The record gives the reactivity of an RNA of 177 nucleotides to 2A3 and DMS. It was measured as part of the RMDB library OK2TRN. The reactions ran in a buffer of 150 mM KOAc, 10 mM MgCl2 and 150 mM bicine (pH 8.5), at 24 C. Reactivities are given for positions 27 through 126. DMS adducts were read by reverse transcription with MarathonRT.
RNA sequence: GGGAACGACUCGAGUAGAGUCGAAAAGAUUAACGAGUACACCACUUAGGGUGUCAAUAGUUCGGGGAAUACGAAAUAUCUUGUAAAGACGGGAUCAAUACGUCAUUUGCUCAAACCCAUUGUACACGGUUGUGAGGCGAUUCGUCGCCUCACAGCUAAAAGAAACAACAACAACAAC
Reactivity to 2A3 in 0.01 (KOAc 150mM, MgCl2 10mM, bicine 150mM(pH8.5), 24C), signal-to-noise 4, nucleotides 027 to 126: g020a050u160u160a060a030c050g000a020g030u090a020c000a010c000c030a050c090u120u250a140g230g000g000u010g010u000c000a020a170u050a070g050u040u030c030g000g000g020g080a030a060u070a070c000g040a000a070a000u210a030u010c020u040u030g030u090a120a140a030g140a080c010g000g020g000a040u070c030a070a040u100a090c010g000u000c060a050u050u040u030g120c010u010c040a070a090a130c000c030c010a020u020u190g060u070a070c100a020c150
Reactivity to DMS in 0.01 (KOAc 150mM, MgCl2 10mM, bicine 150mM(pH8.5), 24C), signal-to-noise 7, nucleotides 027 to 126: g010a130u000u000a080a080c080g000a190g020u010a040c040a070c030c030a170c270u000u000a140g030g020g020u000g000u000c030a050a050u000a110g010u000u010c090g010g000g020g010a060a060u010a170c030g010a050a070a020u010a040u000c020u010u000g010u000a080a080a100g010a110c060g010g000g000a070u000c120a080a060u010a050c020g000u000c090a050u000u000u000g000c010u000c050a040a060a110c030c020c040a140u010u000g020u010a060c190a080c190